[RMDB]
Structure probing data (DMS and 2A3) for a 177-nucleotide construct. For DMS the reverse transcriptase was MarathonRT. It was measured as part of the RMDB library OK2TST. Values cover nucleotides 27 to 126. 2A3 is a SHAPE reagent: it acylates the 2'-hydroxyl of flexible nucleotides of all four kinds.
RNA sequence: GGGAACGACUCGAGUAGAGUCGAAAAAGUCGAAAUAGCUCACGCGUUCUACGGCCUUGUCGCCACGCAGCAGGAACCGAUCGACGACUGGCCACUCGACGACCUCGCUGCCGAGCCGUGCUAUCAGCACCUAUCAUCCAUUCGUGGAUGAUAGGUGAAAAGAAACAACAACAACAAC
Reactivity to DMS in 0.01 (KOAc 150mM, MgCl2 10mM, bicine 150mM(pH8.5), 24C), signal-to-noise 9, nucleotides 027 to 126: a060g010u000c040g010a070a120a060u000a050g000c050u000c110a080c100g010c110g000u000u000c040u000a100c130g010g010c010c030u000u000g020u010c130g000c020c040a110c220g000c010a020g010c010a040g010g010a040a060c070c020g010a120u000c010g010a050c090g010a100c050u000g000g010c030c030a150c130u000c010g010a030c010g000a060c030c010u000c160g010c010u000g010c030c130g000a060g000c010c020g010u000g000c040u000a060u000c090a220g000
Reactivity to 2A3 in 0.01 (KOAc 150mM, MgCl2 10mM, bicine 150mM(pH8.5), 24C), signal-to-noise 9, nucleotides 027 to 126: a010g090u070c020g020a050a060a080u070a040g020c040u070c080a040c040g050c060g020u050u020c050u100a060c070g010g010c010c000u100u180g150u190c080g000c030c010a030c060g000c000a010g010c010a010g000g040a060a100c080c010g100a300u030c020g020a030c020g030a040c040u040g070g020c000c020a040c020u010c000g020a020c010g080a090c010c000u000c090g010c000u010g010c020c020g010a010g010c000c000g010u020g010c010u050a070u120c030a010g050